[RMDB]
Structure probing data (2A3 and DMS) for a 177-nucleotide construct.
RNA sequence: GGGAACGACUCGAGUAGAGUCGAAAAGAUAUGGAGUUCUCCGAAGGGCGAGGAUCAGAGCUCGGAAACGAGCUCUGGGAGCCUCAAGGAGAGACUCCUAAGUCAAAUCCUGACUUCGGUCAGGAAAUCGUUAAAGAAUGUUCGCAUUCUUUAACGAAAAAGAAACAACAACAACAAC
Reactivity to 2A3 in 0.01 (KOAc 150mM, MgCl2 10mM, bicine 150mM(pH8.5), 24C), signal-to-noise 2, nucleotides 027 to 126: g050a020u070a060u140g000g000a020g020u030u000c010u000c010c000g150a220a160g150g000g020c030g070a300g060g010a010u020c010a020g000a000g000c010u000c020g010g000a010a030a010c010g000a020g000c020u000c020u020g000g000g000a000g000c000c000u040c010a000a000g020g000a020g000a000g040a000c010u010c000c000u020a080a010g040u000c020a070a020a220u050c000c000u000g000a010c010u050u120c300g130g000u000c000a000g000g000a010a070a060
Reactivity to DMS in 0.01 (KOAc 150mM, MgCl2 10mM, bicine 150mM(pH8.5), 24C), signal-to-noise 3, nucleotides 027 to 126: g000a040u000a300u010g010g000a040g020u000u000c010u000c000c000g010a300a300g010g010g010c000g010a060g020g000a060u010c000a000g000a040g030c010u000c010g010g000a090a080a200c010g010a040g020c010u000c000u000g000g000g000a070g000c000c000u000c040a030a300g020g000a050g010a060g010a020c010u000c010c000u000a030a110g010u020c020a120a190a200u000c000c000u000g000a000c000u000u020c220g020g000u000c000a040g010g010a010a050a060
The reactions ran in a buffer of 150 mM KOAc, 10 mM MgCl2 and 150 mM bicine (pH 8.5), at 24 C. For DMS, 3,093 sequencing reads were counted.